[RMDB]
This 207-nucleotide RNA was probed chemically with DMS and 2A3. The reactions ran in a buffer of 150 mM KOAc, 10 mM MgCl2 and 150 mM bicine (pH 8.5), at 24 C. The DMS profile rests on 2,298 reads. 2A3 adducts were read by reverse transcription with SuperScript II with manganese. For 2A3, 741 sequencing reads were counted. It was measured as part of the RMDB library OK3TST.
RNA sequence: GGGAACGACUCGAGUAGAGUCGAAAAUGUUCUGUUAGUAGUGAGCACACUGGCACCACAACAGCCCUUAGAGGGAAGCACACAAUCUAGUUAAUUAUGAGGAUGCGAGAAGGAGUAUGACCAUGUGUCUGGGCCUGCUAUUAGUAUCAGGAGAAGCUGUUAACGUCUUCUUCGGAAGACGUUAACAAAAAGAAACAACAACAACAAC
Reactivity to DMS in 0.01 (KOAc 150mM, MgCl2 10mM, bicine 150mM(pH8.5), 24C), signal-to-noise 2, nucleotides 027 to 156: u000g030u010u020c030u020g020u020u000a080g010u010a100g070u010g020a070g010c020a120c070a120c060u030g020g030c060a100c040c050a060c050a060a120c060a090g020c050c010c020u000u040a120g020a110g030g010g000a130a080g030c080a090c040a050c090a040a060u000c060u000a130g020u000u000a070a080u000u010a110u000g010a100g030g020a050u000g030c090g020a080g050a090a110g000g010a120g020u000a110u020g000a060c040c020a110u030g000u000g010u010c030u000g050g040g020c020c010u000g000c110u010a090u000u010a050g000u000a090u000c030a090g000g000a080g040a060a090g000c100
Reactivity to 2A3 in 0.01 (KOAc 150mM, MgCl2 10mM, bicine 150mM(pH8.5), 24C), signal-to-noise 2, nucleotides 027 to 156: u120g000u000u040c000u000g030u030u020a050g040u000a000g040u040g040a040g040c060a080c030a020c060u060g020g000c010a050c040c000a060c050a120a050c020a020g050c040c000c020u070u060a100g010a080g120g000g010a010a000g020c050a020c010a000c000a070a040u000c020u100a080g100u100u070a000a060u100u110a110u120g020a010g040g020a020u070g040c050g000a000g030a020a010g000g000a020g000u070a140u130g000a010c020c060a000u080g070u000g000u040c010u050g010g000g070c000c020u020g000c020u010a010u070u000a030g050u090a050u210c020a010g050g000a070g020a000a010g060c060